[RMDB]
RNA sequence: GGGAACGACUCGAGUAGAGUCGAAAACAUGGUCGCCGCGUUGGAUUUUAUUGCUUGAAAACGUUGCUGUCCUUUGGUGGUUUCCUCUUUCUUAUACGGUCCUUCGUUGUGUGGAAGGCCACCCGUGCACAUUCCGAUCGUUCGCGAUCGGAAUGUGAAAAGAAACAACAACAACAAC
Reactivity to 2A3 in 0.01 (KOAc 150mM, MgCl2 10mM, bicine 150mM(pH8.5), 24C), signal-to-noise 2, nucleotides 027 to 126: c000a020u020g040g000u030c000g000c030c010g010c000g020u030u010g050g040a080u000u010u040u220a190u090u300g090c060u050u070g080a010a000a080a010c060g000u000u010g000c000u090g010u060c010c000u060u020u070g040g000u000g000g020u020u030u020c000c000u000c020u030u150u010c030u050u080a170u040a120c010g000g130u240c020c030u050u040c030g150u090u210g120u060g060u130g150g050a040a000g010g010c000c000a000c000c000c000g070u050g000
Reactivity to DMS in 0.01 (KOAc 150mM, MgCl2 10mM, bicine 150mM(pH8.5), 24C), signal-to-noise 2, nucleotides 027 to 126: c050a120u020g030g000u000c070g030c030c100g000c080g000u020u020g000g000a110u000u050u000u010a090u040u070g000c070u000u000g030a210a040a050a080c050g000u000u000g090c030u020g000u010c050c020u000u010u010g020g010u010g030g000u000u010u000c000c000u000c110u000u000u000c050u020u010a050u000a030c030g050g020u030c050c020u000u050c010g000u020u020g010u060g000u030g000g020a050a090g000g020c280c040a020c050c000c000g010u060g000